[RMDB]
RNA sequence: GGGAACGACUCGAGUAGAGUCGAAAACAUCAUCCCUUCGGGGAUGAUGAAAGAUCGAAAGAUCAGGCUUACCGUAAUAAGCCAAAAUACGUGCGAAACGCAAAAGACCUGUGUUCGCACAGGUCAAGAAUCAAAAGGUGUUCGCACCUUUUGAUUCAAAAGAAACAACAACAACAAC
Reactivity to DMS in 0.01 (KOAc 150mM, MgCl2 10mM, bicine 150mM(pH8.5), 24C), signal-to-noise 3, nucleotides 027 to 126: c010a000u000c000a000u010c000c010c010u010u000c180g040g010g030g020a000u000g010a000u000g010a030a040a120g000a010u000c000g000a140a090a240g020a010u000c010a150g000g010c000u000u000a050c070c150g000u000a080a240u000a010a000g010c000c000a110a040a050a130u010a070c090g000u000g020c110g010a080a070a040c050g000c070a020a050a150a150g000a010c010c000u000g010u000g000u000u000c210g000c020a010c010a010g000g000u000c000a050a040
Reactivity to 2A3 in 0.01 (KOAc 150mM, MgCl2 10mM, bicine 150mM(pH8.5), 24C), signal-to-noise 3, nucleotides 027 to 126: c000a000u020c000a000u010c000c000c000u000u050c180g020g000g000g000a000u020g000a000u000g020a010a020a010g010a000u010c010g030a060a030a010g000a000u020c020a010g000g000c000u020u020a030c030c080g070u030a060a080u040a090a030g010c000c000a020a010a040a030u170a040c070g020u030g030c050g070a230a180a070c090g020c070a090a000a020a090g000a000c000c000u010g000u000g020u030u070c170g020c050a000c010a000g000g010u000c000a000a020
Background
The data come from the RNA Mapping Database (RMDB), library M2PK50. This 177-nucleotide RNA was probed chemically with DMS and 2A3. Reactivities are given for positions 27 through 126. The DMS profile rests on 2,854 reads. For 2A3 the reverse transcriptase was SuperScript II with manganese.